Structure probing data (DMS) for a 177-nucleotide construct. The RNA was probed in 150 mM KOAc, 10 mM MgCl2 and 150 mM bicine (pH 8.5) at 24 C.
[RMDB]
RNA sequence: GGGAACGACUCGAGUAGAGUCGAAAAGAUAUGGACGACUUCGAUAAGCUGCCAUCGGAAACGAUGGGCAGCUUUUGACGAAGAAGUCCUAAGUCAAAAGGGGCUAAGUGUUCGCACUUAGCCCCAAGCUUGUUAUAUCCUUCGGGAUAUAACAAGCAAAAGAAACAACAACAACAAC
Reactivity to DMS in 0.01 (KOAc 150mM, MgCl2 10mM, bicine 150mM(pH8.5), 24C), signal-to-noise 3, nucleotides 027 to 126: g000a030u020a300u000g010g010a010c000g010a300c000u000u000c010g040a120u020a030a020g000c000u000g000c000c010a010u010c000g020g000a070a040a130c000g000a020u000g010g000g010c000a010g020c010u000u000u000u000g020a260c060g010a010a010g010a050a300g000u000c000c000u000a000a070g010u010c010a070a040a130a110g000g000g010g000c000u010a010a020g000u010g030u000u020c250g000c010a000c000u000u000a000g010c000c000c000c000a000a000
Source information
The data come from the RNA Mapping Database (RMDB), library TTRDEL. For DMS the reverse transcriptase was MarathonRT.